[RMDB]
The record gives the reactivity of an RNA of 177 nucleotides to DMS and 2A3. The reactions ran in a buffer of 150 mM KOAc, 10 mM MgCl2 and 150 mM bicine (pH 8.5), at 24 C. It was measured as part of the RMDB library TTRDES.

RNA sequence: GGGAACGACUCGAGUAGAGUCGAAAAGAUAUGGACGUACCAUCAGCGAAGAACUACAUCGGAAACGAUGUAGGGAGCUGUGGUGACGUCCUAAGUCAAAAGAAGGCGCGAGUUCGCUCGCGCCUUCCUAGGAAAGUAUCUUCGGAUACUUUCCUAGAAAAGAAACAACAACAACAAC
Reactivity to DMS in 0.01 (KOAc 150mM, MgCl2 10mM, bicine 150mM(pH8.5), 24C), signal-to-noise 3, nucleotides 027 to 126: g010a030u000a240u000g000g000a000c010g030u010a020c010c000a040u010c200a030g020c010g010a100a170g010a100a250c010u000a000c000a000u000c000g000g000a080a030a090c000g010a020u000g000u000a000g000g000g000a030g010c010u000g040u000g010g000u000g000a010c010g010u000c000c000u000a000a060g000u000c030a100a090a140a150g000a020a000g000g010c000g010c000g000a020g040u010u010c280g020c000u010c010g030c000g010c010c000u000u000c000
Reactivity to 2A3 in 0.01 (KOAc 150mM, MgCl2 10mM, bicine 150mM(pH8.5), 24C), signal-to-noise 1, nucleotides 027 to 126: g000a010u060a040u070g020g030a010c000g040u040a000c010c060a030u300c120a040g070c000g300a300a020g000a030a020c000u010a000c010a000u000c000g010g020a040a000a040c010g010a000u020g000u010a000g000g010g000a010g010c070u060g040u030g010g010u050g060a020c000g010u010c000c000u000a010a000g000u010c000a000a060a040a210g010a000a000g000g000c000g000c000g000a020g000u130u270c300g070c170u020c010g000c000g020c010c040u000u000c000